Annotation:
Structure probing data (2A3 and DMS) for a 177-nucleotide construct. The reactions ran in a buffer of 150 mM KOAc, 10 mM MgCl2 and 150 mM bicine (pH 8.5), at 24 C. Source: RMDB libraries RFM100 and RFMREP, as collected in RNAgym.
[RMDB]
RNA sequence: GGGAACGACUCGAGUAGAGUCGAAAAGGUCCCUGACCUGGGUGGAGUGGCACCUGGUCAGUGGUGCCAGCCUCAUAUCAGUCUGGGGCAAAGCAAUUCCUUGUUUAUCCCAGCUUGGCUUUUGGUUAAACGAUCAUAAGUUCGCUUAUGAUCGUUUAAAAGAAACAACAACAACAAC
Reactivity to 2A3 in 0.01 (KOAc 150mM, MgCl2 10mM, bicine 150mM(pH8.5), 24C), signal-to-noise 8, nucleotides 027 to 126: g020g000u040c010c000c000u010g010a010c020c030u130g040g030g000u040g010g090a230g090u160g070g160c000a000c010c000u010g020g040u030c010a010g040u120g120g030u100g000c000c000a030g020c010c010u040c020a080u110a090u100c050a020g160u040c030u020g010g000g030g000c070a100a030a000g000c010a010a100u180u150c030c000u050u010g040u050u100u040a060u040c000c000c000a020g020c050u030u040g040g010c030u070u080u050u150g070g000u030u040
Reactivity to DMS in 0.01 (KOAc 150mM, MgCl2 10mM, bicine 150mM(pH8.5), 24C), signal-to-noise 4, nucleotides 027 to 126: g020g010u010c010c000c000u000g000a010c010c010u030g010g010g030u000g020g000a150g030u020g000g010c010a010c010c000u020g010g010u000c040a020g020u030g020g010u020g020c000c000a170g000c020c000u000c070a070u020a120u030c110a050g000u010c050u010g000g000g010g000c060a040a060a090g010c040a060a080u020u000c110c080u000u000g010u010u000u010a160u020c010c000c020a070g000c070u000u000g000g000c140u000u000u000u000g000g020u010u000